This 177-nucleotide RNA was probed chemically with 2A3 and DMS. The RNA was probed in 150 mM KOAc, 10 mM MgCl2 and 150 mM bicine (pH 8.5) at 24 C. 2A3 adducts were read by reverse transcription with SuperScript II with manganese. The data come from the RNA Mapping Database (RMDB), libraries RFM100 and RFMREP.

RNA sequence: GGGAACGACUCGAGUAGAGUCGAAAACGGUGAUUAGCAGUGCGUCUUCCACCUAACGACCCUUGAUGAUUAUGAUACGAUGCCUGGUCAACAGAACUAUACUACACCAAAUUUAGUAAAUGAGACAAAAGAUAGUUGACUUCGGUCAACUAUCUUUAAAAGAAACAACAACAACAAC
Reactivity to 2A3 in 0.01 (KOAc 150mM, MgCl2 10mM, bicine 150mM(pH8.5), 24C), signal-to-noise 4, nucleotides 027 to 126: c040g010g000u100g030a180u080u110a040g020c060a020g080u030g120c020g000u030c040u060u000c020c010a020c010c000u030a100a040c050g160a100c020c000c000u010u060g100a120u020g030a030u020u150a050u190g090a040u050a100c080g010a020u040g030c000c010u060g040g010u060c010a040a030c010a120g030a060a000c020u000a010u040a130c060u070a020c030a060c060c050a040a050a100u150u100u020a060g000u030a070a120a160u130g040a050g010a020c070a040
Reactivity to DMS in 0.01 (KOAc 150mM, MgCl2 10mM, bicine 150mM(pH8.5), 24C), signal-to-noise 4, nucleotides 027 to 126: c090g000g000u030g000a040u010u000a110g040c130a060g020u000g020c120g030u000c010u000u020c080c010a050c130c060u020a110a080c130g000a070c040c020c010u000u030g000a070u020g000a080u000u000a110u000g000a090u010a070c100g020a060u000g000c020c010u000g000g000u000c050a090a080c160a040g030a060a070c060u000a070u010a060c050u010a110c220a080c040c080a030a070a090u000u000u010a040g010u010a030a050a050u000g010a100g000a050c130a100